Conditions: 150 mM KOAc, 10 mM MgCl2 and 150 mM bicine (pH 8.5), 24 C.
This 177-nucleotide RNA was probed chemically with DMS and 2A3.
The DMS profile rests on 1,389 reads.
It was measured as part of the RMDB library TTRDES.

[RMDB]
RNA sequence: GGGAACGACUCGAGUAGAGUCGAAAAGAUAUGGAGUCCGUGGAGCUUUUGACGCCUGACUUUCGGAAACGAAAGGAGGGCGAUAAGCUCCAUAGACUCCUAAGUCAAAGUCGAGUUCGCUCGACAAGGUGUUAGAGUAGUUCGCUACUCUAACACCAAAAGAAACAACAACAACAAC
Reactivity to DMS in 0.01 (KOAc 150mM, MgCl2 10mM, bicine 150mM(pH8.5), 24C), signal-to-noise 2, nucleotides 027 to 126: g010a040u000a300u020g000g000a030g000u000c000c000g170u000g000g010a040g000c030u000u000u000u000g020a300c080g020c000c000u010g030a300c000u000u000u020c010g000g000a150a130a280c020g010a000a000a000g010g000a300g000g000g010c000g020a020u010a020a020g010c000u020c000c000a000u010a000g000a020c000u000c000c000u000a000a060g000u010c030a140a150a250g010u000c000g000a010g010u010u010c190g010c000u010c000g000a000c040a060a070
Reactivity to 2A3 in 0.01 (KOAc 150mM, MgCl2 10mM, bicine 150mM(pH8.5), 24C), signal-to-noise 1, nucleotides 027 to 126: g030a010u080a080u180g000g000a000g010u030c020c010g030u010g000g020a010g010c010u260u250u180u140g210a240c010g000c000c030u050g000a050c000u000u000u020c000g020g030a080a120a100c000g000a000a020a000g040g010a020g030g000g000c030g010a010u000a000a000g010c000u020c000c000a010u010a000g010a000c000u010c010c000u010a020a010g000u000c080a150a000a020g000u020c000g010a000g020u040u190c280g000c100u000c000g010a020c020a010a050